[RMDB]
Annotation:
The data come from the RNA Mapping Database (RMDB), library RFMREP. Structure probing data (DMS and 2A3) for a 177-nucleotide construct. The DMS profile rests on 1,433 reads. The RNA was probed in 150 mM KOAc, 10 mM MgCl2 and 150 mM bicine (pH 8.5) at 24 C. Values cover nucleotides 27 to 126.
RNA sequence: GGGAACGACUCGAGUAGAGUCGAAAAUAGCUCAAGGGCGUACACAUCUUGCCUAUGGCAUUUCCCUGGACGUAAGCGGUGACCGCAAGGUAGCAACCUGGAGUUAGCUCGGCUGUGAGUACGUGCAGUCUCUAAUGCUGUUCGCAGCAUUAGAGACAAAAGAAACAACAACAACAAC
Reactivity to DMS in 0.01 (KOAc 150mM, MgCl2 10mM, bicine 150mM(pH8.5), 24C), signal-to-noise 2, nucleotides 027 to 126: u000a100g000c020u000c040a110a300g000g000g020c100g010u000a040c060a160c120a080u000c090u010u000g000c090c000u000a110u020g020g030c050a060u000u000u000c010c020c020u020g020g000a060c060g010u000a050a050g020c030g030g020u000g000a060c030c040g010c190a120a060g000g030u010a120g000c070a080a120c050c010u000g000g020a050g010u010u000a060g000c070u000c080g010g010c020u000g010u000g010a090g030u000a070c040g030u000g000c120a080
Reactivity to 2A3 in 0.01 (KOAc 150mM, MgCl2 10mM, bicine 150mM(pH8.5), 24C), signal-to-noise 1, nucleotides 027 to 126: u060a000g020c020u010c060a040a100g090g010g010c020g060u130a020c090a030c010a060u040c040u100u120g030c000c000u080a110u030g020g000c040a010u000u000u000c010c000c000u020g060g020a010c010g040u090a070a030g030c000g000g050u040g040a020c010c010g020c020a030a040g030g030u030a000g020c020a010a060c010c000u000g090g000a030g110u070u050a020g000c000u000c030g060g020c000u000g030u040g050a030g060u040a050c030g000u040g040c060a020